[RMDB]
RNA sequence: GGGAACGACUCGAGUAGAGUCGAAAAGAUAUGGAACCGCACAGGGAGCUAGUUCGGAAACGAAGUAGCGACGAUCUGUGUCGGUUCCUAAGUCAAAGUACGUGUUAAGUUCGCUUAACACGUACAAUCAAUAAUAUCGCUUCGGCGAUAUUAUUGAAAAAGAAACAACAACAACAAC
Reactivity to 2A3 in 0.01 (KOAc 150mM, MgCl2 10mM, bicine 150mM(pH8.5), 24C), signal-to-noise 3, nucleotides 027 to 126: g000a000u040a040u150g000g000a000a010c000c000g000c010a010c000a000g000g060g000a010g000c010u010a010g300u040u000c020g040g010a040a060a060c010g010a020a020g160u020a010g010c000g160a100c010g020a030u020c010u010g000u000g010u010c010g020g000u000u000c000c000u000a010a010g000u010c030a000a050a180g000u000a010c010g000u000g000u000u010a020a000g010u010u100c300g010c170u000u000a000a010c000a000c000g000u000a000c000a000a000
Reactivity to DMS in 0.01 (KOAc 150mM, MgCl2 10mM, bicine 150mM(pH8.5), 24C), signal-to-noise 6, nucleotides 027 to 126: g000a050u000a300u000g000g010a010a010c000c010g000c010a010c000a010g020g000g010a040g020c000u000a010g000u000u010c000g010g010a120a080a220c010g010a010a020g010u000a000g010c000g010a060c230g010a050u010c000u010g000u000g000u020c030g010g000u000u000c000c000u000a010a050g010u000c040a080a110a130g000u000a000c000g020u000g000u000u000a000a000g010u000u010c210g000c000u000u000a000a000c000a000c000g010u000a000c000a060a080